RNA sequence: GGGAACGACUCGAGUAGAGUCGAAAAAGACAAAAGAGUAACCACAGCUGGGGGAUCGCGUUGGAUCUUAUGCCCAAGAAUUGGCAACGCCACACCAUGUACUGGAAUUGGGAAGCUGCGCAUAACGGACUAGUACCCUAUUCGUAGGGUACUAGUCAAAAGAAACAACAACAACAAC
Reactivity to 2A3 in 0.01 (KOAc 150mM, MgCl2 10mM, bicine 150mM(pH8.5), 24C), signal-to-noise 4, nucleotides 027 to 126: a000g120a030c100a030a110a020a000g090a020g040u060a050a000c000c010a020c040a050g010c030u040g000g020g000g000g000a030u040c020g010c050g040u030u080g060g000a010u000c000u040u060a040u140g040c010c020c000a020a030g060a050a110u080u090g040g000c060a040a010c080g010c020c000a030c000a000c060c010a060u130g030u130a090c060u030g090g080a110a060u100u060g020g000g010a020a010g020c010u030g000c030g000c030a010u060a110a020c050g050
Reactivity to DMS in 0.01 (KOAc 150mM, MgCl2 10mM, bicine 150mM(pH8.5), 24C), signal-to-noise 5, nucleotides 027 to 126: a070g010a090c140a080a020a070a090g020a100g010u010a090a110c050c020a090c080a110g000c070u010g000g000g000g000g010a050u010c050g020c080g030u020u030g010g000a100u020c000u010u010a020u020g010c060c020c000a070a050g020a080a100u000u020g000g000c050a060a100c070g010c020c040a060c130a180c030c020a010u010g010u010a090c110u020g000g000a080a140u020u010g010g000g000a080a120g010c030u000g000c090g010c040a070u030a070a080c230g010
An RNA of 177 nucleotides, treated with 2A3 and DMS and read out base by base. For 2A3 the reverse transcriptase was SuperScript II with manganese. The DMS profile rests on 7,322 reads. Conditions: 150 mM KOAc, 10 mM MgCl2 and 150 mM bicine (pH 8.5), 24 C. Source: RMDB library OK1LIB, as collected in RNAgym.